Structure probing data (DMS and 2A3) for a 177-nucleotide construct. For DMS the reverse transcriptase was MarathonRT. 2A3 adducts were read by reverse transcription with SuperScript II with manganese.
RNA sequence: GGGAACGACUCGAGUAGAGUCGAAAAUCGCCGGGGUGACCUACCUUCACAGUUUAUUCAGGUUAUUAUGGCCGUAGAUGCCGCGUUUAAGGACAAACGCUCCAGCGACUACGUAGCCGCGGGGGUGGUAGUAAAACCGGUUCGCCGGUUUUACUACAAAAGAAACAACAACAACAAC
Reactivity to DMS in 0.01 (KOAc 150mM, MgCl2 10mM, bicine 150mM(pH8.5), 24C), signal-to-noise 3, nucleotides 027 to 126: u010c060g000c020c000g000g000g020g010u000g010a050c080c030u000a090c070c010u000u000c100a080c090a130g010u000u010u010a070u020u010c130a100g020g010u000u010a090u000u020a090u010g010g000c010c000g000u010a040g010a120u010g010c020c100g030c050g000u010u000u000a080a130g010g010a060c220a040a060a150c040g000c000u000c060c120a110g020c000g000a050c020u000a070c170g020u000a080g030c010c000g020c130g000g000g000g000g020u000g020
Reactivity to 2A3 in 0.01 (KOAc 150mM, MgCl2 10mM, bicine 150mM(pH8.5), 24C), signal-to-noise 1, nucleotides 027 to 126: u040c030g060c040c020g020g000g000g000u040g040a060c000c010u030a010c020c000u070u070c080a100c030a080g020u080u110u070a170u180u170c050a020g020g090u020u030a040u170u130a080u160g000g080c040c020g020u040a040g000a090u080g020c000c020g040c040g000u000u060u000a110a070g140g000a060c130a000a050a010c020g020c030u030c040c020a000g010c000g030a020c000u050a020c060g140u110a010g000c000c010g000c000g000g000g000g000g000u050g030